[RMDB]
RNA sequence: GGGAACGACUCGAGUAGAGUCGAAAAGGACGAUACGACGAAGCUCACGCUCCCUCCCGAUGACCGGAUCGAGCUUACCCGUCCGGGCGAGCUCGGUGAGAUCCCUGGAGAACUCGUCGAGCAAUGGCUCGACAGGCUGGUUCGCCAGCCUGUCGAGAAAAGAAACAACAACAACAAC
Reactivity to 2A3 in 0.01 (KOAc 150mM, MgCl2 10mM, bicine 150mM(pH8.5), 24C), signal-to-noise 2, nucleotides 027 to 126: g110g040a040c130g040a120u130a150c030g010a040c010g030a070a010g010c000u010c020a040c000g030c000u000c000c010c000u020c020c000c000g100a140u160g040a040c070c000g020g010a010u150c050g020a030g070c000u130u150a130c050c000c000g020u020c050c060g000g020g000c050g030a000g010c000u000c020g000g030u020g010a000g010a030u040c090c050c170u280g140g000a300g010a110a010c010u010c000g000u000c010g020a000g030c000a020a180u150g090g010
Reactivity to DMS in 0.01 (KOAc 150mM, MgCl2 10mM, bicine 150mM(pH8.5), 24C), signal-to-noise 3, nucleotides 027 to 126: g010g010a110c110g060a100u000a110c050g000a020c020g010a300a290g010c040u000c020a100c040g000c020u000c000c000c010u000c020c010c000g010a100u020g010a100c070c060g000g000a010u010c040g010a040g020c060u000u000a060c030c010c010g000u000c120c100g020g010g020c030g010a030g000c010u000c010g000g010u010g000a080g000a070u000c030c090c080u020g000g000a080g000a040a020c090u000c080g010u000c020g010a040g020c020a130a100u030g000g020